[RMDB]
RNA sequence: GGGAACGACUCGAGUAGAGUCGAAAAGGCGGAAUCCCGAAAUCCCUCCCAAACGCGCGCAAAUAAAGGGAGGGAGGGAUGAUCCCGAAAGCGCGCGACGGGGUGAAGGCUCAACGGCCGAAAGCCAACGAUAGGGAUACUUCGGUAUCCCUAUCGUAAAAGAAACAACAACAACAAC
Reactivity to DMS in 0.01 (KOAc 150mM, MgCl2 10mM, bicine 150mM(pH8.5), 24C), signal-to-noise 3, nucleotides 027 to 126: g030g020c050g060g020a120a080u000c000c000c010g010a070a010a070u010c000c000c000u000c010c000c000a070a110a100c030g030c020g010c010g000c010a060a090a130u040a050a080a120g010g010g000a080g000g010g000a000g000g000g020a060u000g000a120u020c000c000c010g020a050a040a070g010c000g050c000g000c010g010a260c100g020g000g020g020u000g000a120a190g020g000c000u000c080a110a170c260g000g000c010c010g000a050a090a300g010c010c030a130
Reactivity to 2A3 in 0.01 (KOAc 150mM, MgCl2 10mM, bicine 150mM(pH8.5), 24C), signal-to-noise 4, nucleotides 027 to 126: g060g000c030g050g080a100a040u040c000c000c000g000a000a030a030u020c000c010c000u000c000c000c010a050a230a100c060g010c000g010c000g010c040a060a160a090u260a180a160a040g010g010g010a020g020g000g000a010g000g000g000a040u100g020a010u030c000c000c000g070a090a040a000g020c010g000c000g000c010g020a030c040g000g070g000g000u060g060a050a010g020g010c030u040c130a110a090c070g030g000c020c000g020a070a010a000g000c000c000a000